Structure probing data (2A3 and DMS) for a 177-nucleotide construct.
The reactions ran in a buffer of 150 mM KOAc, 10 mM MgCl2 and 150 mM bicine (pH 8.5), at 24 C.
Values are in units of 0.01, from 0 to 300, in steps of 10.
DMS adducts were read by reverse transcription with MarathonRT.
For 2A3, 722 sequencing reads were counted.
[RMDB]
RNA sequence: GGGAACGACUCGAGUAGAGUCGAAAAUAUGGAUGAUGCUACUAUCGCCAUGUAUGGCACCAUUGCAGGAGCAUCUGUGUCAGCAGGCAUGUUUGGUGGCCAAGCAGGUAUGAUUACGUGGAAUACAAGGUAAUAGGGACUUCGGUCCCUAUUACCUAAAAGAAACAACAACAACAAC
Reactivity to 2A3 in 0.01 (KOAc 150mM, MgCl2 10mM, bicine 150mM(pH8.5), 24C), signal-to-noise 1, nucleotides 027 to 126: u140a050u050g080g000a070u070g000a010u020g030c010u040a070c000u070a040u090c030g000c020c010a100u060g080u110a240u090g000g000c020a010c010c020a010u000u150g000c070a040g010g270a120g000c120a090u090c060u040g060u010g020u050c040a090g010c000a030g120g060c000a010u090g060u140u170u070g010g000u040g080g120c040c000a060a030g040c030a010g070g030u170a090u160g100a110u200u020a040c140g010u000g020g010a000a020u070a070c000a070
Reactivity to DMS in 0.01 (KOAc 150mM, MgCl2 10mM, bicine 150mM(pH8.5), 24C), signal-to-noise 2, nucleotides 027 to 126: u010a080u010g000g020a030u010g000a030u000g010c080u010a060c080u010a130u010c060g000c010c010a040u030g040u000a050u010g040g000c050a060c040c090a100u000u010g030c050a070g000g000a110g050c000a020u010c100u000g010u000g010u000c090a090g010c040a030g050g000c040a040u000g000u000u000u000g010g020u000g000g000c010c090a020a240g030c030a060g040g040u000a040u000g010a100u000u010a060c110g000u000g000g000a100a060u000a080c200a160